[RMDB]
RNA sequence: GGGAACGACUCGAGUAGAGUCGAAAAGUUAAAGCCAUUUACUUUUGAGACUUGGUUCAUUACAAAGCUGGAAUCUCAAUAAGGUCGCUCUCACUAAAGCUAGUCACAAAGUAAAGAAAACAAAAGGUUGACUAUUUUUCCAGUUGAUCAUGUGAAACAUCAUCCCUAGUUUCGACUAGGGAUGAUGAAAAGAAACAACAACAACAAC
Reactivity to DMS in 0.01 (KOAc 150mM, MgCl2 10mM, bicine 150mM(pH8.5), 24C), signal-to-noise 1, nucleotides 027 to 156: g060u000u000a110a090a050g000c020c060a150u000u000u000a010c010u000u010u000u020g000a150g010a070c020u010u030g030g000u010u000c020a060u010u020a240c130a070a020a120g010c010u000g040g010a090a080u000c030u010c040a070a130u000a180a050g020g020u000c010g040c010u020c000u040c000a110c080u010a050a050a170g000c040u000a030g000u000c020a030c020a110a120a070g010u000a060a050a160g000a120a010a110a300c070a120a070a050a040g030g020u000u010g000a030c060u000a070u000u030u000u010u000c100c060a100g020u000u000g000a050u020c040a090u000g010u000g000a250a090a100
Reactivity to 2A3 in 0.01 (KOAc 150mM, MgCl2 10mM, bicine 150mM(pH8.5), 24C), signal-to-noise 2, nucleotides 027 to 156: g030u030u040a110a020a000g000c020c000a030u000u000u100a040c050u050u100u050u090g130a100g010a030c020u010u060g050g000u100u110c060a060u110u170a130c100a060a150a020g020c040u060g030g020a100a150u010c020u000c070a040a160u180a220a020g030g010u020c000g010c020u000c000u000c030a010c030u090a150a050a000g010c010u030a000g000u030c010a030c010a110a050a000g030u080a050a040a020g120a050a210a100a020c110a010a120a030a020g030g000u050u020g020a000c000u010a110u050u080u000u000u000c020c000a000g000u020u000g060a050u050c120a050u130g030u140g060a130a000a000